[RMDB]
RNA sequence: GGGAACGACUCGAGUAGAGUCGAAAAGCUCACGAACACCAAAGUGCAACAUCUUUGCCUCGCGAUGGUCGGCACUAAAUCCCACCGGCCAAUCAGCAAUCGCCGUAUUGUUCGAUGGCGCUAAAUCCAGAACCAAUCUUUUCGAAGAUUGGUUCUGAAAAGAAACAACAACAACAAC
Reactivity to 2A3 in 0.01 (KOAc 150mM, MgCl2 10mM, bicine 150mM(pH8.5), 24C), signal-to-noise 4, nucleotides 027 to 126: g000c020u020c010a050c020g050a050a020c010a020c040c030a090a040a000g050u070g020c030a070a040c020a130u110c030u040u040u040g000c000c020u040c040g010c020g030a020u050g000g020u010c000g000g030c040a020c090u120a070a060a030u030c010c000c010a010c010c000g030g000c020c020a010a160u080c030a010g020c030a040a060u050c050g100c170c030g080u150a040u110u080g020u030u030c030g060a140u010g020g010c030g000c060u100a120a070a010u070c050
Reactivity to DMS in 0.01 (KOAc 150mM, MgCl2 10mM, bicine 150mM(pH8.5), 24C), signal-to-noise 5, nucleotides 027 to 126: g010c060u000c010a060c050g010a070a050c050a080c300c040a050a050a050g020u000g010c120a120a140c080a090u010c020u010u010u000g010c140c070u000c080g020c070g010a020u010g010g020u000c040g000g010c100a060c120u010a050a110a110u000c010c030c010a190c040c050g010g000c000c010a050a050u000c050a070g010c100a080a050u000c060g020c140c170g000u020a080u010u000g010u000u000c070g010a060u000g010g000c080g000c170u010a050a050a090u000c110